RNA sequence: GGGAACGACUCGAGUAGAGUCGAAAACAAGCUGGCGCAUCUGGUUGACCGAACCACGGGCACCCGAAUGCGACAUCAUGUAGACCGAGUUCAUCUGCUUCUGGCGACCGGUCACCGGAUCGAAUUAAUACCCCUAAUGAUUCGUCAUUAGGGGUAUAAAAGAAACAACAACAACAAC
Reactivity to DMS in 0.01 (KOAc 150mM, MgCl2 10mM, bicine 150mM(pH8.5), 24C), signal-to-noise 9, nucleotides 027 to 126: c030a070a110g010c130u000g000g000c020g020c030a020u000c010u000g010g000u000u000g010a030c010c010g010a120a160c300c270a130c080g000g010g010c010a020c060c020c020g010a030a020u000g010c010g000a030c030a030u000c040a070u000g010u000a080g010a070c030c010g000a130g010u000u000c060a070u000c090u010g010c080u000u010c150u010g010g010c040g010a070c080c010g000g000u000c020a070c030c020g000g000a070u010c090g010a100a090u010u000a090
Reactivity to 2A3 in 0.01 (KOAc 150mM, MgCl2 10mM, bicine 150mM(pH8.5), 24C), signal-to-noise 6, nucleotides 027 to 126: c020a020a030g040c040u060g040g000c010g000c010a010u000c020u040g030g000u090u080g030a020c000c000g020a090a060c070c040a120c110g000g000g000c010a010c010c020c020g040a080a020u030g010c010g040a020c000a040u050c010a010u110g050u090a030g020a040c020c020g030a060g060u060u080c050a130u040c070u090g020c030u150u100c080u220g030g000c010g030a030c020c000g020g000u030c010a020c020c010g030g020a080u090c040g040a050a030u110u060a110
This 177-nucleotide RNA was probed chemically with DMS and 2A3. The reactions ran in a buffer of 150 mM KOAc, 10 mM MgCl2 and 150 mM bicine (pH 8.5), at 24 C. For DMS, 30,462 sequencing reads were counted. It was measured as part of the RMDB library OK2TST.